[RMDB]
RNA sequence: GGGAACGACUCGAGUAGAGUCGAAAAGUUAGGUGAGGCUCCUAGGCAAACACAGGCCACUGCCCAAAAAUGUCCAAAGACGCCAAUGGGUAGAACAGGGAUUGUCGGAUUAAGGCUUUCCAUAAUGAAAACAAAGUAUGCUUCGGCAUACUUUGAAGUAUGUAUGGUUGUUCGCAACCAUACAUACAAAAGAAACAACAACAACAAC
Reactivity to DMS in 0.01 (KOAc 150mM, MgCl2 10mM, bicine 150mM(pH8.5), 24C), signal-to-noise 2, nucleotides 027 to 156: g040u010u000a030g000g020u000g010a080g020g020c030u010c030c020u000a110g000g040c000a100a060a050c090a110c040a090g030g020c000c010a150c070u000g040c000c000c030a000a030a090a100a130u000g010u000c030c030a060a040a180g040a050c000g050c080c060a070a280u000g030g030g010u000a040g000a070a120c090a150g000g010g000a140u000u000g000u010c050g020g000a220u010u000a130a070g000g010c030u000u000u000c010c030a160u010a050a120u000g010a110a070a130a110c020a000a020a040g000u010a010u000g010c000u000u010c300g080g020c010a020u050a020c000u010u000u020g000a020a090
Reactivity to 2A3 in 0.01 (KOAc 150mM, MgCl2 10mM, bicine 150mM(pH8.5), 24C), signal-to-noise 2, nucleotides 027 to 156: g070u050u040a030g000g030u030g040a050g020g020c010u050c010c040u040a050g000g030c010a050a130a060c040a030c020a100g010g060c000c000a020c030u020g000c000c020c000a010a010a000a010a030u020g000u000c000c030a180a080a160g010a010c010g000c000c000a010a030u020g030g000g000u010a000g010a060a030c040a080g010g040g010a040u040u000g040u020c010g040g000a080u120u120a090a020g010g020c000u020u030u000c030c000a030u120a150a120u180g090a070a040a010a020c000a000a000a000g000u000a000u000g000c000u040u070c170g060g000c000a000u010a000c000u000u000u000g000a000a010
Conditions: 150 mM KOAc, 10 mM MgCl2 and 150 mM bicine (pH 8.5), 24 C.
Structure probing data (DMS and 2A3) for a 207-nucleotide construct.
Reactivities are given for positions 27 through 156.